[RMDB]
This 207-nucleotide RNA was probed chemically with DMS and 2A3. 2A3 adducts were read by reverse transcription with SuperScript II with manganese. The reactions ran in a buffer of 150 mM KOAc, 10 mM MgCl2 and 150 mM bicine (pH 8.5), at 24 C.

RNA sequence: GGGAACGACUCGAGUAGAGUCGAAAAUGAAGGACAAGGGCUACCCUACCCUCGGCAGCUCUGCUGUGGCCUCUGUCGCCCUGAGAUGGAGAUGUGCUGAGUUAUUACACCCUUGGGGCCACCGCCACCUCCCUGCUCUAUUGUGGCAGCCCCAGGCUCACAUUUGAUUCUUCGGAAUCAAAUGUGAAAAAGAAACAACAACAACAAC
Reactivity to DMS in 0.01 (KOAc 150mM, MgCl2 10mM, bicine 150mM(pH8.5), 24C), signal-to-noise 1, nucleotides 027 to 156: u000g000a160a090g000g020a070c070a040a050g000g000g050c010u000a060c050c030c030u000a090c050c040c000u000c040g010g040c030a070g010c030u000c020u000g000c030u010g050u020g030g000c000c000u020c070u000g000u010c030g020c040c040c080u000g010a160g010a100u000g000g010a100g020a080u000g000u010g010c050u000g000a200g000u000u010a060u000u000a120c080a120c010c020c020u000u000g040g000g030g000c000c020a030c070c060g010c040c010a040c020c080u000c050c010c020u010g020c100u000c060u000a090u020u000g000u000g010g020c000a140g000c000c010c010c010a050g000g020c130
Reactivity to 2A3 in 0.01 (KOAc 150mM, MgCl2 10mM, bicine 150mM(pH8.5), 24C), signal-to-noise 3, nucleotides 027 to 156: u170g010a060a010g060g010a020c080a060a070g000g020g000c040u060a110c020c020c000u050a080c030c030c000u010c000g000g010c000a010g020c010u010c010u090g010c020u030g040u170g030g000c020c040u210c120u160g130u200c070g020c020c010c040u110g080a140g050a210u120g030g000a020g000a030u080g020u040g160c020u010g020a020g020u040u050a120u120u140a080c060a080c010c020c000u000u020g010g000g020g000c020c040a060c040c090g020c000c000a010c000c030u090c030c020c020u020g070c000u050c020u220a180u130u210g000u000g000g000c010a000g010c000c010c000c000a000g020g010c000